Source information:
The record gives the reactivity of an RNA of 170 nucleotides to 2A3. Reactivities are given for positions 27 through 129. The RNA was probed in 150 mM KOAc, 10 mM MgCl2 and 150 mM bicine (pH 8.5) at 24 C.

RNA sequence: GGGAACGACUCGAGUAGAGUCGAAAAACUUAAUGCAAGCAGGGAGUGUCGUGCGUAGAGUUAACGUGCCCUACGUGUGUCUCCUAGCUAAUAAAGAGCAAGAAGCUAUUUUGAUGUCUGAAGACGUACCCCACCGCGUUCGCGCGGUGGAAAAGAAACAACAACAACAAC
Reactivity to 2A3 in 0.01 (KOAc 150mM, MgCl2 10mM, bicine 150mM(pH8.5), 24C), signal-to-noise 3, nucleotides 027 to 129: a000c010u040u010a010a070u100g030c040a000a090g010c000a070g000g000g000a020g000u020g050u100c000g010u000g020c000g000u000a000g020a010g000u060u110a140a040c090g120u250g000c000c000c000u000a000c010g010u010g000u020g000u000c000u000c000c000u040a100g000c000u000a010a010u170a030a100a010g160a010g000c000a010a050g050a090a000g050c050u080a150u050u040u050u090g090a080u020g050u060c050u070g010a070a000g040a020c000g020u030a060c000c000
Source: RMDB library 15KLIB, as collected in RNAgym.